[RMDB]
RNA sequence: GGGAACGACUCGAGUAGAGUCGAAAAUGCCCUUUCUUUCUGCCUUGGGGAGGGUGACCACCACCAGAAACAGGGCGACGUUCUCGUCUAGCUCGCGUUCCACAUCUUUGGGACCCGAACACAUCUUAGUGGUCUUAUACUUCAUGUCCCCCAAGGGGACCCUUUGGUACUUCGGUACCAAAGGGUCAAAAGAAACAACAACAACAAC
Reactivity to 2A3 in 0.01 (KOAc 150mM, MgCl2 10mM, bicine 150mM(pH8.5), 24C), signal-to-noise 2, nucleotides 027 to 156: u150g020c010c000c050u000u010u010c100u080u070u020c090u100g140c000c000u010u000g000g000g000g010a160g010g070g000u020g000a050c040c040a000c020c040a080c030c040a040g000a070a150a030c070a160g000g010g030c000g010a060c130g100u200u060c070u010c040g040u020c020u010a040g000c050u020c000g040c000g030u010u020c060c000a010c010a160u160c230u140u230u020g000g000g000a010c000c150c040g000a090a030c070a010c010a190u020c010u050u010a100g010u000g010g000u000c020u120u260a170u100a110c050u090u160c110a160u130g120u150c000c000c000c020c000a000a010g030g000g000
The data come from the RNA Mapping Database (RMDB), library VIROID. This 207-nucleotide RNA was probed chemically with 2A3. The RNA was probed in 150 mM KOAc, 10 mM MgCl2 and 150 mM bicine (pH 8.5) at 24 C. Values cover nucleotides 27 to 156. For 2A3, 606 sequencing reads were counted.